[RMDB]
RNA sequence: GGGAACGACUCGAGUAGAGUCGAAAAUCGAGUUCGUGAUCUCACUCUCACGUGUACGUUCGUGAGUUCGUGAGUUCUCACUCGUUCUCGUACGAACACUCUCGUGAACGUACACACGUGAUCUCGUGAUCUCUCGUGUGAGAACUCGUUCGAUCACCGUCCCUGGCUUCUUCGGAAGCCAGGGACGAAAAGAAACAACAACAACAAC
Reactivity to 2A3 in 0.01 (KOAc 150mM, MgCl2 10mM, bicine 150mM(pH8.5), 24C), signal-to-noise 2, nucleotides 027 to 156: u030c010g010a010g010u170u030c070g010u160g030a060u090c000u000c030a000c010u080c000u000c010a040c060g000u060g050u100a080c090g100u120u090c020g010u020g010a020g000u050u090c000g000u000g000a010g000u010u020c030u010c030a020c020u060c030g000u010u010c010u010c000g030u090a020c010g000a030a020c010a020c070u120c010u060c190g050u040g000a020a000c000g000u010a010c100a000c000a010c060g010u010g000a000u000c070u020c100g010u030g090a170u030c010u000c000u000c090g150u060g040u180g260a010g000a080a030c040u010c060g090u140u050c060g000a010u050c010a030c040